[RMDB]
An RNA of 177 nucleotides, treated with DMS and 2A3 and read out base by base. Reactivities are given for positions 27 through 126. Source: RMDB library OK2TRN, as collected in RNAgym. For DMS the reverse transcriptase was MarathonRT. The DMS profile rests on 6,649 reads.
RNA sequence: GGGAACGACUCGAGUAGAGUCGAAAACUACGAUCGCAUGGAGGGCAAUGACAUCUGCCUGAGCAUCCCGUGGGCUAAGCCGAACGAAAAUCUCCUGCAGAGCUGGCGUUUAGGCCAAACGGGAUUCUCACAUUAUUGUCUUCGGACAAUAAUGUGAAAAAGAAACAACAACAACAAC
Reactivity to DMS in 0.01 (KOAc 150mM, MgCl2 10mM, bicine 150mM(pH8.5), 24C), signal-to-noise 6, nucleotides 027 to 126: c040u000a100c130g000a090u000c070g030c060a070u000g010g000a150g010g010g010c040a080a080u010g000a090c150a090u010c110u000g010c030c030u000g000a070g010c120a100u000c010c000c000g010u000g010g010g020c070u010a060a090g010c030c010g000a080a090c080g010a060a040a090a130u000c030u000c010c070u000g020c130a120g000a060g010c290u010g010g000c020g010u000u000u000a090g020g000c010c010a030a090a030c010g000g000g000a030u000u000c050
Reactivity to 2A3 in 0.01 (KOAc 150mM, MgCl2 10mM, bicine 150mM(pH8.5), 24C), signal-to-noise 5, nucleotides 027 to 126: c020u090a080c060g070a060u130c060g020c130a070u120g090g040a070g010g020g000c020a020a100u130g070a060c020a130u060c060u080g010c010c010u040g010a030g000c010a010u000c010c000c000g000u020g000g000g000c030u050a040a030g020c010c010g050a090a070c050g060a060a060a060a180u030c030u030c030c060u190g020c100a030g010a020g050c050u040g030g030c020g020u050u070u080a100g020g000c000c000a090a100a010c000g000g000g000a010u040u020c010